[RMDB]
RNA sequence: GGGAACGACUCGAGUAGAGUCGAAAAAGGUCAGAACGACUGGGAAAGAAAAGAGAGCAACGGGGCUAGCUGCCGGGUGUUCCACCUACGGGAACGGUGCCGAGUGAGGCUUAUCCCGGGGGGUAGCGAAUCCCCCUGUUCGCAGGGGGAAAAAGAAACAACAACAACAAC
Reactivity to 2A3 in 0.01 (KOAc 150mM, MgCl2 10mM, bicine 150mM(pH8.5), 24C), signal-to-noise 8, nucleotides 027 to 129: a000g060g000u080c040a050g060a110a050c060g030a020c040u050g020g000g020a020a070a030g070a000a070a020a010g060a000g000a010g000c010a040a070c050g020g010g020g030c020u040a050g020c010u020g050c030c000g000g000g020u050g030u020u030c030c010a050c040c040u080a100c060g020g000g010a050a000c030g030g080u080g010c000c000g010a020g040u160g040a060g030g000c020u040u070a120u120c010c010c010g010g000g010g000g000g010u030a020g020c020g020a040a040
Reactivity to DMS in 0.01 (KOAc 150mM, MgCl2 10mM, bicine 150mM(pH8.5), 24C), signal-to-noise 9, nucleotides 027 to 129: a050g050g020u030c030a090g000a070a110c080g010a040c040u030g000g000g000a040a040a030g000a040a040a050a060g010a060g020a040g000c040a060a090c100g020g010g020g000c030u000a110g010c030u000g010c040c010g020g000g000u030g020u020u020c050c040a080c090c050u020a080c110g000g000g000a000a020c140g030g030u000g000c020c040g000a120g040u000g000a080g030g000c030u030u030a110u020c050c020c010g020g000g020g010g010g030u040a020g040c060g020a120a130